[RMDB]
RNA sequence: GGGAACGACUCGAGUAGAGUCGAAAAAUCCGGCUGCAAGGACGGGCCGCACUUGAGGCCGAGCGGGUUUUUGAUGCCGCGGCAAUAUUCGAUAUGCGCAUGGUCAGGCUGGCGCGUACGAUCGCCAGGGUAAUGAGCAUUUCGAUGCUCAUUACCCAAAAGAAACAACAACAACAAC
Reactivity to 2A3 in 0.01 (KOAc 150mM, MgCl2 10mM, bicine 150mM(pH8.5), 24C), signal-to-noise 2, nucleotides 027 to 126: a000u030c000c000g020g020c030u050g010c040a090a020g070g020a060c040g020g100g040c010c010g010c040a110c070u050u130g050a080g030g000c000c010g000a020g040c020g010g010g000u030u080u010u080u170g100a050u140g090c010c010g080c010g020g000c020a010a080u050a110u100u060c020g060a050u000a010u070g010c030g000c020a030u160g060g030u070c050a030g140g080c010u050g040g010c040g030c010g050u050a050c040g020a070u070c090g010c140c020a020
Reactivity to DMS in 0.01 (KOAc 150mM, MgCl2 10mM, bicine 150mM(pH8.5), 24C), signal-to-noise 2, nucleotides 027 to 126: a060u010c000c020g010g000c020u000g030c090a050a100g000g010a090c180g010g010g020c050c010g010c090a070c090u010u000g010a130g010g010c020c010g000a120g020c060g010g000g010u000u000u010u000u020g010a110u000g000c010c030g000c150g020g050c020a130a070u010a070u000u000c040g060a130u000a070u010g010c020g020c020a060u000g010g000u010c110a120g020g000c020u000g010g020c000g010c050g000u010a010c070g000a070u000c080g010c020c010a130
An RNA of 177 nucleotides, treated with 2A3 and DMS and read out base by base. 2A3 adducts were read by reverse transcription with SuperScript II with manganese. For DMS the reverse transcriptase was MarathonRT. For 2A3, 1,206 sequencing reads were counted. Reactivities are given for positions 27 through 126. The DMS profile rests on 2,301 reads.